RNA sequence: GGGAACGACUCGAGUAGAGUCGAAAAUCAAUGGACUUCGGUCCAUUGAAAAAGUCAAUAAAGCUAGAGCUGAGCUGAAUGACAACAGCACAAAGAAAAGAAAAAUCGUGCACUUCGGUGCACGAAAGAUAUUUGAUAACUUCGGUUAUCAAAUAUCAAAAGAAACAACAACAACAAC
Reactivity to DMS in 0.01 (KOAc 150mM, MgCl2 10mM, bicine 150mM(pH8.5), 24C), signal-to-noise 5, nucleotides 027 to 126: u010c000a000a020u000g000g000a000c000u000u010c210g030g010u000c000c000a000u000u000g000a020a050a060a130a100g010u000c030a040a050u000a070a200a030g000c010u010a060g010a130g010c120u000g010a050g020c010u000g000a050a150u010g000a010c030a090a130c110a080g010c080a100c170a070a110a110g000a050a030a070a120g010a030a050a070a110a100u000c000g010u000g000c000a000c000u000u000c170g020g000u000g010c000a000c000g010a000a020a050
Reactivity to 2A3 in 0.01 (KOAc 150mM, MgCl2 10mM, bicine 150mM(pH8.5), 24C), signal-to-noise 5, nucleotides 027 to 126: u010c000a000a010u000g000g000a000c000u040u030c220g100g000u000c000c000a000u000u000g000a000a000a000a000a000g030u030c020a010a080u080a160a090a000g000c030u050a040g040a040g250c120u130g050a010g000c010u020g030a110a040u050g020a030c000a050a020c010a050g110c070a020c060a140a100a030g140a110a120a040a030g130a020a120a030a050a030u030c000g000u000g000c000a000c010u030u050c240g100g000u000g000c000a000c000g000a000a000a000